[RMDB]
Structure probing data (DMS and 2A3) for a 177-nucleotide construct.
RNA sequence: GGGAACGACUCGAGUAGAGUCGAAAACAUGUGAUGAUCGAGUGUGUCAUCGAUCUACUAGGUACCACAUGGAUCAUAGUCAUGAUACAGUACGAUGAUCGUACCAUGAUCUAGACAUGCUAGCAUGGCGAACCCUGUUGUUCGCAACAGGGUUCGCAAAAGAAACAACAACAACAAC
Reactivity to DMS in 0.01 (KOAc 150mM, MgCl2 10mM, bicine 150mM(pH8.5), 24C), signal-to-noise 1, nucleotides 027 to 126: c010a100u000g000u000g010a110u010g000a020u000c050g000a080g030u000g010u020g000u010c050a080u020c010g000a030u000c040u000a120c230u010a050g000g000u000a100c010c140a300c100a030u010g010g000a140u000c050a100u010a020g000u000c060a020u000g000a190u050a100c190a090g000u000a030c030g000a130u000g000a150u000c000g000u000a000c030c010a090u000g010a030u000c010u000a170g000a080c080a000u000g000c030u000a010g010c070a030u000g030
Reactivity to 2A3 in 0.01 (KOAc 150mM, MgCl2 10mM, bicine 150mM(pH8.5), 24C), signal-to-noise 2, nucleotides 027 to 126: c010a010u080g020u100g070a150u020g050a030u060c040g040a050g110u120g030u040g100u150c050a120u060c070g000a020u000c000u040a060c070u050a030g000g020u070a100c010c000a020c020a130u100g060g000a060u040c040a120u070a050g060u010c010a030u080g110a020u080a110c020a040g030u060a010c050g030a120u220g050a130u190c030g040u000a000c000c000a030u100g000a010u010c040u010a060g030a040c020a020u040g030c020u030a050g010c020a070u070g000
About this RNA: For DMS the reverse transcriptase was MarathonRT. The DMS profile rests on 787 reads. It was measured as part of the RMDB library OK2TRN. The reactions ran in a buffer of 150 mM KOAc, 10 mM MgCl2 and 150 mM bicine (pH 8.5), at 24 C.